[RMDB]
RNA sequence: GGGAACGACUCGAGUAGAGUCGAAAAGAUAUGGAGAUAUGGGUGGGAGUUGUAUGUCGGAAACGACAUACCAACGACGAUCACCCUGUAUCUCCUAAGUCAAAACCCUAUGCUUCGGCAUAGGGAAGCAGAUUAUGUGGUUCGCCACAUAAUCUGCAAAAGAAACAACAACAACAAC
Reactivity to DMS in 0.01 (KOAc 150mM, MgCl2 10mM, bicine 150mM(pH8.5), 24C), signal-to-noise 1, nucleotides 027 to 126: g000a000u000a150u000g000g010a000g000a050u000a030u010g020g000g010u000g010g050g010a080g000u000u000g040u000a000u000g010u000c000g010g020a090a040a130c000g010a010c000a000u010a000c300c250a020a040c000g000a160c300g000a090u030c010a000c010c000c030u000g040u000a000u000c000u000c000c000u000a010a050g000u000c010a100a080a150a190c000c000c000u010a000u000g000c000u000u030c300g020g010c000a000u000a000g010g010g000a010a040
Reactivity to 2A3 in 0.01 (KOAc 150mM, MgCl2 10mM, bicine 150mM(pH8.5), 24C), signal-to-noise 1, nucleotides 027 to 126: g010a000u070a020u080g010g020a030g010a010u060a050u090g020g010g000u150g020g090g060a230g040u010u010g000u000a000u000g010u000c000g000g000a060a000a010c000g010a000c000a010u000a000c000c100a000a000c000g290a080c110g110a150u120c030a000c010c000c030u060g010u020a000u010c000u000c000c000u020a020a010g020u000c020a040a000a060a300c020c010c000u010a010u000g000c010u030u120c300g220g000c000a010u000a000g000g000g000a000a020